Conditions: 150 mM KOAc, 10 mM MgCl2 and 150 mM bicine (pH 8.5), 24 C. This 177-nucleotide RNA was probed chemically with 2A3 and DMS. Values cover nucleotides 27 to 126. For DMS, 1,026 sequencing reads were counted. Reactivities are rounded to 0.1 and cut off at 0 and 3.

RNA sequence: GGGAACGACUCGAGUAGAGUCGAAAAGAUAUGGACCACGCAGCUUCUACGCGAAGAACUCGGAAACGAGGGAGCGUUCUAGCUUCCCGUGGUCCUAAGUCAAAACGUUCUCCUUCGGGAGAACGAAGGUGGUAUCUAGGUUCGCCUAGAUACCACCAAAAGAAACAACAACAACAAC
Reactivity to 2A3 in 0.01 (KOAc 150mM, MgCl2 10mM, bicine 150mM(pH8.5), 24C), signal-to-noise 1, nucleotides 027 to 126: g030a030u060a060u120g000g000a020c020c010a000c020g140c180a000g000c000u000u040c040u050a000c020g030c000g220a300a020g030a070a010c000u000c020g010g040a080a080a090c010g010a020g000g000g010a020g000c000g000u050u000c040u040a000g030c000u040u030c000c000c000g030u000g000g000u000c000c000u010a020a010g010u000c010a030a020a010a080c000g000u000u030c000u000c000c000u000u130c260g110g010g000a000g000a020a010c000g000a030a030
Reactivity to DMS in 0.01 (KOAc 150mM, MgCl2 10mM, bicine 150mM(pH8.5), 24C), signal-to-noise 2, nucleotides 027 to 126: g010a030u000a300u020g010g000a030c000c000a000c010g070c140a020g000c000u000u000c020u020a030c010g020c030g010a150a070g010a070a110c000u000c000g000g020a140a100a150c020g000a040g000g000g010a060g000c000g000u000u000c000u000a030g020c000u000u000c100c270c000g060u000g000g030u000c010c010u000a000a080g010u030c060a050a050a060a110c030g000u010u010c000u000c000c030u000u000c220g030g000g010a020g010a000a000c000g010a010a020